[RMDB]
RNA sequence: GGGAACGACUCGAGUAGAGUCGAAAAGGCUUGGGGCCGAGAGACUCAAACGGGUACGUCCGGGGUAGGAGUGAAAUCCUGUAAUCCUGGACGGACCACCAAUGGGGAAACCACGUUGAGAGACCGGGACAUUCUACUGGUUCGCCAGUAGAAUGUCAAAAGAAACAACAACAACAAC
Reactivity to DMS in 0.01 (KOAc 150mM, MgCl2 10mM, bicine 150mM(pH8.5), 24C), signal-to-noise 1, nucleotides 027 to 126: g000g000c080u000u010g020g030g030g000c010c010g000a110g000a300g040a040c040u030c040a040a100a060c240g010g000g060u010a090c050g020u000c000c000g000g000g010g020u020a010g000g030a050g000u000g060a170a100a120u020c000c000u000g060u000a120a070u020c000c000u000g010g000a010c000g050g000a020c030c000a090c120c200a070a080u000g030g020g010g000a110a110a210c030c020a130c020g000u000u000g000a120g000a090g000a300c070c000g010g000
Chemical mapping of a 177-nucleotide RNA with DMS.
Conditions: 150 mM KOAc, 10 mM MgCl2 and 150 mM bicine (pH 8.5), 24 C.
The DMS profile rests on 563 reads.
Values cover nucleotides 27 to 126.
The data come from the RNA Mapping Database (RMDB), library RFMREP.